[RMDB]
An RNA of 177 nucleotides, treated with DMS and read out base by base. For DMS, 858 sequencing reads were counted. For DMS the reverse transcriptase was MarathonRT. Source: RMDB library OK2TST, as collected in RNAgym.
RNA sequence: GGGAACGACUCGAGUAGAGUCGAAAAAAUAAUAUACGGCCAAUGUUUGGGGUUUUGUGCGUUUUUUCUAUCGCUGUUACUAUUCGAAGACAUAAUCACAUUUCAUUGGAUAGUCAUUCUACUCACAUCAAGUAGGGAGUUUCGACUCCCUACUUGAAAAAGAAACAACAACAACAAC
Reactivity to DMS in 0.01 (KOAc 150mM, MgCl2 10mM, bicine 150mM(pH8.5), 24C), signal-to-noise 1, nucleotides 027 to 126: a050a030u010a070a110u020a090u020a110c070g000g000c000c020a040a010u000g000u010u000u010g010g010g010g000u000u000u010u010g030u010g010c010g030u000u000u000u000u010u020c130u020a070u000c020g000c070u010g000u010u000a020c070u000a090u010u000c130g010a100a020g010a050c080a020u010a020a080u000c040a030c050a050u000u010u000c020a020u000u000g000g000a030u030a070g020u000c210a080u010u010c010u000a020c000u000c000a140c280a130